[RMDB]
Chemical mapping of a 177-nucleotide RNA with 2A3 and DMS. The RNA was probed in 150 mM KOAc, 10 mM MgCl2 and 150 mM bicine (pH 8.5) at 24 C. For DMS the reverse transcriptase was MarathonRT. Source: RMDB library M2PK50, as collected in RNAgym.
RNA sequence: GGGAACGACUCGAGUAGAGUCGAAAAUACCAAUGGUUCGCCAUUGGUACUUGUAUUGACGAAUACUACCGUAGUAGUAUUCAGGUCUCAUAACUACGGAUAUACACUAGAGUUUCGACUCUAGUAAUAGUAUUUAGUGCUUCGGCACUAAAUACUAAAAAGAAACAACAACAACAAC
Reactivity to 2A3 in 0.01 (KOAc 150mM, MgCl2 10mM, bicine 150mM(pH8.5), 24C), signal-to-noise 3, nucleotides 027 to 126: u020a000c000c000a010a010u010g020g020u030u040c220g050c070c000a010u010u000g000g000u020a030c020u040u130g130u150a230u060u240g110a050c060g020a010a000u000a000c000u020a140c000c000g030u050a040g000u000a010g010u000a010u030u000c020a040g040g040u000c010u000c050a120u070a190a040c010u010a010c010g040g000a040u040a030u030a200c070a000c020u000a000g000a010g010u030u110u090c170g110a020c010u000c000u010a010g000u000a000a000
Reactivity to DMS in 0.01 (KOAc 150mM, MgCl2 10mM, bicine 150mM(pH8.5), 24C), signal-to-noise 2, nucleotides 027 to 126: u000a020c000c000a010a000u000g000g010u000u010c210g030c000c000a000u010u010g000g010u000a000c060u000u000g010u020a170u010u000g000a170c120g010a010a010u000a010c020u000a110c000c050g000u010a010g000u000a030g020u000a010u000u000c010a050g020g020u000c000u000c030a040u000a110a040c010u000a000c010g000g010a300u010a090u000a080c200a040c000u000a010g000a000g000u000u000u010c130g000a020c000u000c000u000a000g010u010a050a070